Notes
The record gives the reactivity of an RNA of 177 nucleotides to 2A3 and DMS. The 2A3 profile rests on 8,005 reads. It was measured as part of the RMDB library OK2TRN. Values are in units of 0.01, from 0 to 300, in steps of 10. The reactions ran in a buffer of 150 mM KOAc, 10 mM MgCl2 and 150 mM bicine (pH 8.5), at 24 C. For DMS, 16,614 sequencing reads were counted.

[RMDB]
RNA sequence: GGGAACGACUCGAGUAGAGUCGAAAAGCAGCCAGCGCUGCGGUGGAAGCGCUGACGGCGCGGUUGGCCGCCGCGCAUGCGAGCGCAGCGCCGGUGAUUACCGCGGUAGUGCCGCCGGCGGCGGAUCUCUUAUAUUAGGAUUCGUCCUAAUAUAAGAAAAAGAAACAACAACAACAAC
Reactivity to 2A3 in 0.01 (KOAc 150mM, MgCl2 10mM, bicine 150mM(pH8.5), 24C), signal-to-noise 4, nucleotides 027 to 126: g050c030a010g030c000c030a050g010c010g000c020u030g000c010g000g000u070g070g140a180a030g090c020g010c040u060g060a090c060g010g030c010g010c020g040g020u100u080g060g020c010c000g000c000c010g020c030g010c010a020u150g020c020g050a100g110c010g000c010a020g020c000g000c020c020g000g000u040g030a240u080u250a040c010c020g010c030g020g050u110a100g040u070g070c030c020g010c030c030g110g030c030g020g000c020g050g030a060u040c030
Reactivity to DMS in 0.01 (KOAc 150mM, MgCl2 10mM, bicine 150mM(pH8.5), 24C), signal-to-noise 7, nucleotides 027 to 126: g000c060a140g000c000c020a110g030c020g020c000u000g010c030g010g010u000g010g000a180a130g010c020g010c010u000g010a080c080g010g010c000g020c040g010g000u000u000g010g010c050c070g010c010c010g010c010g020c050a030u010g020c040g010a120g010c020g030c010a080g000c020g010c030c030g010g010u000g000a130u010u010a080c020c010g010c050g010g010u000a080g030u010g010c060c020g010c020c110g010g010c030g010g010c030g000g000a060u010c070